[RMDB]
RNA sequence: GGGAACGACUCGAGUAGAGUCGAAAAUACACUUUACGUGUGCUGGUUUCAUUACUUUGUCCCAAACCUGGCACGCGUAAUUAAAGGCCAGUUUGGCCAGGUCCGCGUUAUCGAUGGUCACCAAUAAUCACGAAGGGGUAUUCGUACCCCUUCGUGAAAAAGAAACAACAACAACAAC
Reactivity to DMS in 0.01 (KOAc 150mM, MgCl2 10mM, bicine 150mM(pH8.5), 24C), signal-to-noise 1, nucleotides 027 to 126: u030a130c120a130c100u000u000u000a010c000g000u010g020u000g020c000u000g000g020u000u020u000c140a130u000u000a090c150u010u000u010g020u000c000c030c030a050a040a010c000c000u020g010g030c010a040c000g000c000g000u000a000a020u010u000a100a050a090g000g030c000c020a090g010u000u000u010g010g000c030c000a070g000g010u000c020c040g000c070g010u000u010a090u020c050g030a120u010g000g000u000c050a070c040c030a070a080u000a040a080
Reactivity to 2A3 in 0.01 (KOAc 150mM, MgCl2 10mM, bicine 150mM(pH8.5), 24C), signal-to-noise 1, nucleotides 027 to 126: u100a000c050a010c030u010u000u000a010c000g010u020g010u000g000c000u010g000g150u000u000u110c100a020u090u070a100c080u260u160u290g060u110c070c030c000a000a000a000c030c000u060g050g000c000a000c010g000c000g010u000a000a000u010u060a100a080a020g030g030c000c020a030g110u110u120u110g080g030c000c000a000g020g030u030c000c060g030c070g040u050u070a180u100c020g020a090u090g010g070u120c060a130c100c020a060a090u200a090a060